[RMDB]
RNA sequence: GGGAACGACUCGAGUAGAGUCGAAAAGCUUUCGCUGGAGAUCGGCCUGUCGCUUGCGGUAUUCGGAAUCUUGCACGCCCUCGCUCAAGCCUUCGUCACUCCAAACGUUUCGGCGAGAAGCAGGCCACCUAUGCGUAGGGUUCGCCCUACGCAUAGGAAAAGAAACAACAACAACAAC
Reactivity to 2A3 in 0.01 (KOAc 150mM, MgCl2 10mM, bicine 150mM(pH8.5), 24C), signal-to-noise 3, nucleotides 027 to 126: g030c030u070u070u110c050g010c050u020g050g000a070g000a110u130c030g000g030c000c000u040g050u090c070g000c080u010u050g040c050g010g020u120a120u050u120c030g020g090a070a090u060c040u050u250g000c040a000c080g000c000c020c000u000c020g020c030u030c050a070a040g010c000c030u010u070c030g040u010c020a020c090u030c000c020a090a070a060c050g010u000u060u100c070g030g010c000g020a050g040a040a010g030c010a010g000g030c020c000a040
Reactivity to DMS in 0.01 (KOAc 150mM, MgCl2 10mM, bicine 150mM(pH8.5), 24C), signal-to-noise 3, nucleotides 027 to 126: g010c060u000u020u000c080g020c040u030g020g020a090g020a070u000c080g020g000c010c010u010g020u000c150g010c030u000u010g000c040g020g010u010a090u000u010c070g020g010a060a080u000c040u000u000g000c050a090c120g010c040c120c020u010c070g010c020u010c070a060a110g010c050c050u000u010c040g000u010c050a050c090u010c050c040a060a090a090c120g000u000u000u000c080g030g020c010g000a050g020a080a080g000c030a060g000g000c020c050a130